[RMDB]
RNA sequence: GGGAACGACUCGAGUAGAGUCGAAAAACAAGUUCGCUUGUAAGUAUACCUUUGUGGACAUGGAGAUCGAGGACGAGCUCGAUCCCAUUGGGAUCGAGAACUACUCGUCGUAGAUCUAUGAAGUGUCCACUCUGGUUAGUGCGCGUUUCGACGCGAAACUCAGAUCAAAGUUCGCUUUGAUCUGAGUAAAAGAAACAACAACAACAAC
Reactivity to DMS in 0.01 (KOAc 150mM, MgCl2 10mM, bicine 150mM(pH8.5), 24C), signal-to-noise 2, nucleotides 027 to 156: a050c020a060a280g010u010u010c150g030c020u030u000g010u000a100a150g000u010a170u020a040c040c000u000u000u010g020u000g030g000a000c020a030u000g010g000a020g010a040u000c010g010a300g000g000a030c030g040a030g010c010u000c030g000a010u000c000c000c000a150u000u020g010g020g000a030u000c010g000a080g000a050a070c060u000a280c010u000c000g030u000c000g030u000a300g010a020u000c010u000a080u010g030a150a240g000u010g010u000c010c000a010c020u000c050u000g010g010u000u000a070g010u000g040c000g000c010g010u000u000u010c120g020a080c000g030c000g020a040a150
Reactivity to 2A3 in 0.01 (KOAc 150mM, MgCl2 10mM, bicine 150mM(pH8.5), 24C), signal-to-noise 3, nucleotides 027 to 156: a010c050a030a010g070u080u120c170g050c140u120u080g020u120a100a120g130u050a130u040a190c000c010u050u010u010g000u020g010g010a000c010a010u020g030g040a010g010a000u010c010g020a070g170g000a020c000g010a010g000c000u000c000g000a010u010c010c010c050a190u070u290g010g000g000a000u000c010g020a000g040a040a050c040u230a070c000u050c000g000u000c000g000u000a000g000a000u000c000u000a000u000g010a000a010g000u000g000u000c000c000a000c000u000c000u000g040g000u010u070a100g010u080g060c010g010c030g010u020u040u220c260g100a030c020g000c010g010a090a040

Record summary:
Structure probing data (DMS and 2A3) for a 207-nucleotide construct. The RNA was probed in 150 mM KOAc, 10 mM MgCl2 and 150 mM bicine (pH 8.5) at 24 C. DMS (dimethyl sulfate) methylates the pairing face of unpaired adenines and cytosines. The data come from the RNA Mapping Database (RMDB), library RNAMAK.